[RMDB]
RNA sequence: GGGAACGACUCGAGUAGAGUCGAAAAUAACCGAUCCAGAUGCCACCGUAACGGCCAUCGGUGCGGAGAAAGACGCGCUGAACUACAUCACCAACUUCUACCCUCCGGCGGCAGAGAAGCAACGCGAGUCCGAAAAUACUUUCGAGUAUUUUCGGACAAAAGAAACAACAACAACAAC
Reactivity to DMS in 0.01 (KOAc 150mM, MgCl2 10mM, bicine 150mM(pH8.5), 24C), signal-to-noise 3, nucleotides 027 to 126: u010a020a210c030c050g020a040u020c050c030a070g020a100u000g020c060c000a080c070c020g020u010a060a060c140g040g000c070c030a050u000c010g010g020u000g000c050g000g020a040g000a100a130a080g030a100c060g020c000g010c070u020g000a060a040c210u000a120c120a080u000c020a060c000c050a110a170c070u010u010c050u020a090c050c010c020u010c050c070g020g000c050g000g020c030a020g010a100g000a110a050g000c120a070a080c040g000c060g000a140
Reactivity to 2A3 in 0.01 (KOAc 150mM, MgCl2 10mM, bicine 150mM(pH8.5), 24C), signal-to-noise 5, nucleotides 027 to 126: u130a030a040c010c020g020a080u090c010c030a040g040a080u080g050c020c010a050c020c050g060u080a050a030c070g030g030c020c010a030u040c020g010g010u010g020c060g030g030a080g130a090a130a000g160a030c010g020c000g010c060u050g000a120a060c040u100a030c090a070u040c040a020c030c020a040a050c010u110u020c010u040a140c000c000c000u020c010c010g060g000c000g000g000c020a000g040a000g020a110a000g020c040a050a030c030g030c030g080a020
Source information
This 177-nucleotide RNA was probed chemically with DMS and 2A3. The reactions ran in a buffer of 150 mM KOAc, 10 mM MgCl2 and 150 mM bicine (pH 8.5), at 24 C. Values cover nucleotides 27 to 126. The 2A3 profile rests on 4,754 reads.